[RMDB]
RNA sequence: GGGAACGACUCGAGUAGAGUCGAAAAGAGUGAUAUUUACUGGGCACUUCCACAUGGUCCAUGUAAAGGGAGAUGGUUGGGGUGACAGGCAGUUGAGUCUAGGGGAGGCAUGUACAGAUGUGCUGUGCGUCCAGGUUACAUUCGUGUAACCUGGACGAAAAGAAACAACAACAACAAC
Reactivity to 2A3 in 0.01 (KOAc 150mM, MgCl2 10mM, bicine 150mM(pH8.5), 24C), signal-to-noise 2, nucleotides 027 to 126: g140a030g010u170g100a070u050a050u120u100u020a070c040u010g010g070g000c020a010c110u240u050c050c010a090c000a070u120g020g000u000c020c000a030u130g010u080a060a070a020g020g030g020a150g040a100u110g000g140u170u160g020g000g010g030u020g050a070c020a030g060g000c030a020g030u250u230g100a050g040u020c020u100a040g000g040g030g000a030g000g080c080a050u030g020u070a060c020a060g070a100u080g110u060g050c000u040g020u060g060
Reactivity to DMS in 0.01 (KOAc 150mM, MgCl2 10mM, bicine 150mM(pH8.5), 24C), signal-to-noise 2, nucleotides 027 to 126: g010a060g010u010g010a120u000a080u000u000u000a020c050u000g000g000g020c020a060c080u000u000c050c150a100c120a080u000g000g010u000c010c000a040u000g010u000a030a070a080g030g000g020a050g020a090u000g000g000u010u010g000g000g000g030u000g000a090c150a080g010g020c110a090g000u000u000g000a130g000u020c050u000a100g000g000g000g000a110g010g000c070a040u010g010u000a040c090a070g010a110u000g000u010g000c020u000g010u000g000